[RMDB]
RNA sequence: GGGAACGACUCGAGUAGAGUCGAAAAACGCGCUAGAAACUGCUCUUGUUGAAGGUGCAGUCUUAACCAGAGACUCUGCAGAAGAUGUACUUGAACAUGUUGUUAGCAACAUGGAUAGAAUUAUUGGUGAAGUGUCUAAAACCAAGUUCAAACAUGAGCCUGUAAAAGAAUUCGUUCUUUUACAGGCAAAAGAAACAACAACAACAAC
Reactivity to 2A3 in 0.01 (KOAc 150mM, MgCl2 10mM, bicine 150mM(pH8.5), 24C), signal-to-noise 3, nucleotides 027 to 156: a000c030g040c010g020c050u050a030g050a040a120a010c020u030g010c010u010c020u060u040g100u040u180g090a130a010g000g000u060g000c000a030g010u000c000u080u060a040a010c030c010a000g010a000g000a090c030u010c010u070g020c050a030g020a160a010g030a040u090g010u070a080c020u050u090g070a050a020c010a040u040g000u020u010g020u030u080a040g060c020a010a020c000a020u000g020g010a080u080a080g010a000a030u100u070a070u090u030g050g000u030g030a080a090g060u080g060u070c060u130a030a080a030a010c010c000a000a010g010u050u060c030a080a100a080c040a040u000g020a020
Reactivity to DMS in 0.01 (KOAc 150mM, MgCl2 10mM, bicine 150mM(pH8.5), 24C), signal-to-noise 3, nucleotides 027 to 156: a110c100g070c070g000c030u000a130g010a110a090a060c050u000g020c010u000c010u010u000g030u000u010g010a190a160g010g020u000g030c020a050g030u010c000u010u000a110a110c080c040a110g000a300g000a050c020u010c010u020g010c030a090g020a100a100g000a110u010g020u000a050c030u000u000g000a080a110c020a060u000g020u000u010g010u010u010a120g010c040a000a050c010a020u010g010g000a160u010a170g000a070a070u000u000a140u000u000g000g050u010g000a090a110g010u000g010u000c070u000a050a050a180a070c030c040a020a140g010u010u000c020a100a090a160c040a120u000g010a290